[RMDB]
RNA sequence: GGGAACGACUCGAGUAGAGUCGAAAAGUCAAGAUGUGUAGGAUAGGUGGGAGGCUUUGAAGUGUGGACGCCAGUCUGCAUGGAGCCGACCUUGAAAUACCACGCUUUAAUGGAAAAACAAAGUGAACAUUAUUACUUCGUUCGCGAAGUAAUAAUGAAAAGAAACAACAACAACAAC
Reactivity to DMS in 0.01 (KOAc 150mM, MgCl2 10mM, bicine 150mM(pH8.5), 24C), signal-to-noise 8, nucleotides 027 to 126: g010u000c070a070a070g010a090u010g010u010g020u000a040g010g010a120u000a030g010g010u000g010g010g010a290g010g010c000u000u010u010g010a110a140g010u000g020u000g000g000a020c020g010c200c190a140g010u000c000u000g000c000a020u000g000g010a030g010c010c000g000a110c020c020u000u000g000a090a110a090u010a060c030c020a060c050g010c030u000u000u000a060a120u010g010g000a040a050a070a070a080c200a060a040a050g010u010g000a090a160
Reactivity to 2A3 in 0.01 (KOAc 150mM, MgCl2 10mM, bicine 150mM(pH8.5), 24C), signal-to-noise 6, nucleotides 027 to 126: g090u050c050a040a010g040a160u090g100u010g030u100a080g020g020a060u020a040g040g090u050g080g080g040a090g000g000c000u270u160u080g050a050a030g020u000g000u010g010g000a000c010g050c060c010a020g000u000c010u000g000c000a010u020g010g010a010g000c000c010g010a030c010c010u000u020g010a040a010a010u050a030c010c010a020c040g030c020u080u060u080a110a100u160g130g030a070a100a020a030a050c070a060a110a010g110u110g090a060a010
Structure probing data (DMS and 2A3) for a 177-nucleotide construct.
Source: RMDB library M2PK90, as collected in RNAgym.
For 2A3 the reverse transcriptase was SuperScript II with manganese.